[RMDB]
RNA sequence: GGGAACGACUCGAGUAGAGUCGAAAAGAUAUGGAAUAUCGGUGAGCACGACGAUCAAUCAUCGGAAACGAUGAUUGGGAGUGCCACCGAGUAUUCCUAAGUCAAAACUAACCCUUCGGGGUUAGAAGUAUGCACUUUCGUUCGCGAAAGUGCAUACAAAAGAAACAACAACAACAAC
Reactivity to 2A3 in 0.01 (KOAc 150mM, MgCl2 10mM, bicine 150mM(pH8.5), 24C), signal-to-noise 1, nucleotides 027 to 126: g000a040u070a030u110g000g000a130a000u050a020u070c000g010g020u020g030a270g070c000a030c090g300a130c000g010a090u050c000a030a000u010c000a000u010c010g040g020a080a020a020c010g000a000u000g010a000u000u020g000g000g000a040g000u000g000c030c000a000c000c010g010a000g000u000a000u010u000c000c000u000a140a010g060u000c060a000a000a240a300c000u000a010a000c000c030c000u080u080c300g070g000g020g010u030u010a020g000a050a010
Reactivity to DMS in 0.01 (KOAc 150mM, MgCl2 10mM, bicine 150mM(pH8.5), 24C), signal-to-noise 1, nucleotides 027 to 126: g000a080u010a300u000g010g000a070a000u020a050u000c020g000g000u010g000a180g050c000a000c000g020a130c300g000a090u000c000a000a000u000c010a010u000c010g000g000a160a120a170c000g000a000u000g020a000u000u000g000g000g000a100g000u000g010c000c000a000c000c000g010a000g000u020a020u000u010c000c000u000a020a190g020u020c010a080a110a160a230c000u000a010a020c000c000c000u000u000c300g030g000g000g030u000u000a000g000a070a210